RNA sequence: GGGAACGACUCGAGUAGAGUCGAAAAGGGGCUAAAAUUGGAAGUCGAGUCACUUAAAAAUGGGUUGAAUGGCACAUUACGUAUUGGCGUGGUGCCACAAUGCAGUAUCUCUUUGGCACGAUUACUGAACGUUUGUGGUGUUCGCACCACAAACGUUAAAAGAAACAACAACAACAAC
Reactivity to 2A3 in 0.01 (KOAc 150mM, MgCl2 10mM, bicine 150mM(pH8.5), 24C), signal-to-noise 1, nucleotides 027 to 126: g080g000g000g000c060u080a240a030a010a060u130u100g060g010a030a040g020u020c020g020a020g110u000c020a020c070u140u120a020a180a030a110a120u100g040g000g040u000u020g120a240a120u080g090g010c000a020c010a030u050u200a040c050g040u030a130u180u290g170g020c060g000u000g000g000u010g000c000c000a030c000a000a000u060g020c000a010g040u040a040u060c020u080c000u020u060u060g060g040c100a020c050g020a020u010u120a070c050u020g090
Reactivity to DMS in 0.01 (KOAc 150mM, MgCl2 10mM, bicine 150mM(pH8.5), 24C), signal-to-noise 1, nucleotides 027 to 126: g030g010g020g000c220u010a040a030a020a120u010u020g010g020a070a070g020u000c010g010a100g020u020c010a060c140u000u010a030a020a030a170a100u000g010g030g010u010u000g040a140a110u000g000g000c020a010c000a040u010u010a030c040g010u000a210u060u010g010g000c050g050u000g010g000u000g000c000c010a050c110a020a060u000g000c070a050g020u010a050u020c140u000c060u010u030u000g010g010c080a150c050g000a080u020u010a080c030u000g030
Structure probing data (2A3 and DMS) for a 177-nucleotide construct. For 2A3 the reverse transcriptase was SuperScript II with manganese. It was measured as part of the RMDB library OK2TST. Values are in units of 0.01, from 0 to 300, in steps of 10. For DMS the reverse transcriptase was MarathonRT. For DMS, 843 sequencing reads were counted.